[RMDB]
RNA sequence: GGGAACGACUCGAGUAGAGUCGAAAAUUCCUUCAUUGGCAGAAAAAAUCGAAAACGGUAGCAUUCAAAAUGAAAACAUCCGAAAGCGAAGCGAUAAUAAUUGGGGAGAACGUGUGAAUAAUAUGCGUACUUCGCCUUAGUUCGCUAAGGCGAAGUAAAAAGAAACAACAACAACAAC
Reactivity to 2A3 in 0.01 (KOAc 150mM, MgCl2 10mM, bicine 150mM(pH8.5), 24C), signal-to-noise 2, nucleotides 027 to 126: u070u000c020c000u000u050c010a040u100u180g090g000c010a020g300a140a200a100a000a000a130u100c000g030a140a130a000a000c020g000g040u070a000g000c050a030u100u110c020a000a010a000a140u100g030a000a070a000a000c040a010u000c020c000g080a270a100a010g000c010g030a000a000g020c050g160a040u000a060a070u030a010a010u300u230g010g020g000g000a010g000a030a000c000g030u040g030u050g180a010a000u250a120a000u090a000u190g000c000g000
Reactivity to DMS in 0.01 (KOAc 150mM, MgCl2 10mM, bicine 150mM(pH8.5), 24C), signal-to-noise 2, nucleotides 027 to 126: u000u000c020c000u000u010c070a060u020u010g000g010c060a110g030a000a000a100a080a090a090u000c020g010a140a060a030a210c060g010g000u000a030g000c040a080u000u010c120a090a060a090a030u020g000a090a080a080a140c060a010u000c040c140g000a040a060a000g010c050g020a070a050g030c030g040a020u030a030a020u040a030a070u010u050g000g000g020g000a050g000a040a030c070g020u000g000u000g000a090a070u030a040a050u020a040u000g000c010g000